[RMDB]
An RNA of 177 nucleotides, treated with 2A3 and DMS and read out base by base. The reactions ran in a buffer of 150 mM KOAc, 10 mM MgCl2 and 150 mM bicine (pH 8.5), at 24 C. High DMS reactivity at an A or C suggests that its Watson-Crick edge is free. For DMS the reverse transcriptase was MarathonRT.
RNA sequence: GGGAACGACUCGAGUAGAGUCGAAAAGCAGCCAGGGACCCGACACGGUGAGCACCGCCGCGAGCAUUGCGAUCCAUCGCGGGUCAUCGAGAAACUGGGCCAGCAAUGUGGCGAGCCGGUCGGAAAGGACCAUUUCACGAUUCGUCGUGAAAUGGUCAAAAGAAACAACAACAACAAC
Reactivity to 2A3 in 0.01 (KOAc 150mM, MgCl2 10mM, bicine 150mM(pH8.5), 24C), signal-to-noise 2, nucleotides 027 to 126: g020c000a000g050c000c000a010g050g040g000a020c000c000c000g020a000c080a020c070g010g000u020g030a020g050c000a010c030c090g070c020c010g070c040g040a020g000c040a060u030u080g040c000g020a040u020c030c020a070u070c060g020c040g030g000g070u010c000a050u030c020g090a070g030a030a080a000c120u100g000g050g000c010c010a000g000c020a120a060u190g030u120g040g000c010g000a000g000c020c010g000g010u040c010g020g070a090a080a060g090
Reactivity to DMS in 0.01 (KOAc 150mM, MgCl2 10mM, bicine 150mM(pH8.5), 24C), signal-to-noise 2, nucleotides 027 to 126: g010c110a080g000c020c000a060g010g000g010a220c130c000c030g010a040c130a030c090g000g010u030g000a220g020c070a040c140c010g000c040c020g000c210g020a090g000c020a010u070u010g040c080g010a140u050c010c020a020u000c180g000c090g030g020g000u080c040a030u010c110g010a270g030a050a070a010c130u000g020g090g000c030c050a160g010c020a040a050u000g040u000g000g050c000g080a180g000c000c030g000g010u060c030g050g000a090a060a080g000